[RMDB]
RNA sequence: GGGAACGACUCGAGUAGAGUCGAAAACGAGCCGGCUUUCGAUGGAUUCCUCGGGGUUCCAUGGUCAGCCGUUUUUCCUAGAGGUCUAUUUACCUCCACCUAAGGGCCCUGGUUUUCCAGUGGCCCUGGUUGCCAUACUAUUCGUAGUAUGGCAACCAAAAGAAACAACAACAACAAC
Reactivity to 2A3 in 0.01 (KOAc 150mM, MgCl2 10mM, bicine 150mM(pH8.5), 24C), signal-to-noise 6, nucleotides 027 to 126: c080g010a010g060c020c010g000g000c010u010u020u020c040g100a010u010g040g020a050u140u150c030c030u120c190g200g040g030g000u040u020c010c000a000u050g120g000u010c000a000g000c000c010g000u040u020u000u010u000c000c000u010a050g000a000g030g010u050c070u190a270u110u170u160a040c000c000u030c030c020a200c010c040u090a050a060g010g000g010c000c000c000u010g010g040u090u080u230u150c020c000a050g020u090g130g000c010c000c000u000
Reactivity to DMS in 0.01 (KOAc 150mM, MgCl2 10mM, bicine 150mM(pH8.5), 24C), signal-to-noise 1, nucleotides 027 to 126: c030g010a190g000c300c000g000g000c000u000u000u010c030g000a000u050g000g010a050u010u040c010c010u070c300g000g020g000g030u020u000c000c020a010u010g000g020u000c000a030g000c000c000g020u030u000u000u000u000c000c000u010a120g000a040g030g040u020c300u000a050u060u060u030a080c020c020u030c000c240a150c140c040u020a150a060g000g000g000c000c000c010u000g030g000u000u100u000u000c010c000a010g100u000g010g030c000c000c000u000
Chemical mapping of a 177-nucleotide RNA with 2A3 and DMS.
For DMS, 1,765 sequencing reads were counted.
For 2A3 the reverse transcriptase was SuperScript II with manganese.